An RNA of 207 nucleotides, treated with 2A3 and read out base by base. The RNA was probed in 150 mM KOAc, 10 mM MgCl2 and 150 mM bicine (pH 8.5) at 24 C. The data come from the RNA Mapping Database (RMDB), library RNAMAK.

[RMDB]
RNA sequence: GGGAACGACUCGAGUAGAGUCGAAAAGGGGUCUUAGUUGUCAGAUAGGCACUACGCGAAGAACCUGAAGCCUCCACGGGGGAGCGUAAACCUAUCUUGGAUUUACUAAGACGGAGGCACCCAAACCAGCUCUACAAGUUCGCUUGUAGAGCUGGAACACCUUCAGGUAGUUCGCUACCUGAAGGUGAAAAGAAACAACAACAACAAC
Reactivity to 2A3 in 0.01 (KOAc 150mM, MgCl2 10mM, bicine 150mM(pH8.5), 24C), signal-to-noise 1, nucleotides 027 to 156: g000g030g010g000u000c010u010u010a020g000u010u080g020u020c010a010g000a000u010a020g000g000c060a010c130u020a010c010g060c000g100a300a090g030a110a050c010c000u060g020a100a030g060c000c030u070c080c020a040c020g000g000g040g000g020a060g020c000g000u030a040a100a140c000c000u000a010u020c000u030u100g090g000a030u240u170u020a000c000u000a010a020g000a000c030g000g010a000g030g010c020a060c000c000c020a010a050a080c000c000a000g010c000u000c000u000a000c000a010a020g030u100u070c170g160c220u000u000g000u000a000g000a000g000c000u000g000g000a000a000